RNA sequence: GGGAACGACUCGAGUAGAGUCGAAAAUGAAAUCCCGUAAUCCUGGACGGACCACCGGUGGCGAAAGCGCCUCAGGAAGACGGAUCCGACGGUGAGGGACGAAAGCUCGGGUCACGAACCGGAUUAGGAACUAAUUCGAGUUCGCUCGAAUUAGUUCAAAAGAAACAACAACAACAAC
Reactivity to DMS in 0.01 (KOAc 150mM, MgCl2 10mM, bicine 150mM(pH8.5), 24C), signal-to-noise 2, nucleotides 027 to 126: u010g010a150a200a210u000c000c020c000g020u000a200a030u020c000c020u010g020g020a090c020g010g030a030c050c010a070c010c030g010g000u000g000g000c010g000a210a240a150g000c060g020c000c000u000c030a050g000g000a110a060g020a090c160g050g010a160u000c000c010g030a080c070g000g000u010g000a110g020g000g000a060c000g000a060a080a120g020c000u000c010g030g030g000u000c000a040c010g050a300a240c030c010g000g010a170u000u020a110g000
Reactivity to 2A3 in 0.01 (KOAc 150mM, MgCl2 10mM, bicine 150mM(pH8.5), 24C), signal-to-noise 2, nucleotides 027 to 126: u140g050a000a040a040u030c000c010c000g000u040a020a070u050c000c010u060g020g080a080c000g000g000a010c000c000a020c000c020g020g020u000g010g000c010g050a300a190a120g300c050g000c010c000u020c000a000g030g030a020a040g100a010c120g000g060a280u000c010c000g000a000c000g010g000u040g040a070g010g010g010a000c020g020a040a020a010g000c010u000c000g000g000g010u010c010a010c060g040a030a020c000c000g010g030a130u190u150a080g020
Record summary:
Chemical mapping of a 177-nucleotide RNA with DMS and 2A3. High 2A3 reactivity points to a flexible backbone, as in loops and unpaired stretches. DMS adducts were read by reverse transcription with MarathonRT. DMS (dimethyl sulfate) methylates the pairing face of unpaired adenines and cytosines. Values cover nucleotides 27 to 126. For DMS, 1,140 sequencing reads were counted.